[RMDB]
RNA sequence: GGGAACGACUCGAGUAGAGUCGAAAAGCUCACUCACCGAGGUUAUUUGCCUCCAAGAUGGAAGAGGCUAAAGCCAGUUACCGAUACAUUAGACCACCGAAAGGUGAUGUGGUAGGGGGGCGUGCUAAAUCUUCUGCGAGUUCGCUCGCAGAAGAUUAAAAGAAACAACAACAACAAC
Reactivity to DMS in 0.01 (KOAc 150mM, MgCl2 10mM, bicine 150mM(pH8.5), 24C), signal-to-noise 2, nucleotides 027 to 126: g050c020u040c000a010c050u000c010a080c080c020g130a120g040g000u000u000a150u000u000u020g000c000c000u000c000c050a120a050g010a180u060g020g010a130a180g000a090g050g000c010u000a040a020a140g000c000c000a250g000u010u000a070c030c000g010a130u030a120c050a060u000u010a070g000a120c120c010a010c000c020g030a020a110a090g000g000u000g000a010u020g000u040g000g030u000a120g000g010g000g010g000g010c070g000u010g000c080u000a010
Reactivity to 2A3 in 0.01 (KOAc 150mM, MgCl2 10mM, bicine 150mM(pH8.5), 24C), signal-to-noise 2, nucleotides 027 to 126: g000c000u000c020a040c020u070c000a000c040c090g000a060g080g010u150u080a180u230u210u180g010c000c000u000c000c000a120a040g120a220u090g080g000a100a000g000a050g010g000c000u040a000a000a000g000c000c000a010g070u070u050a070c020c010g010a030u050a170c020a040u160u080a080g140a200c000c030a020c000c020g100a150a010a020g050g000u010g060a050u030g060u040g020g010u030a090g020g000g000g000g000g000c010g050u040g000c000u100a080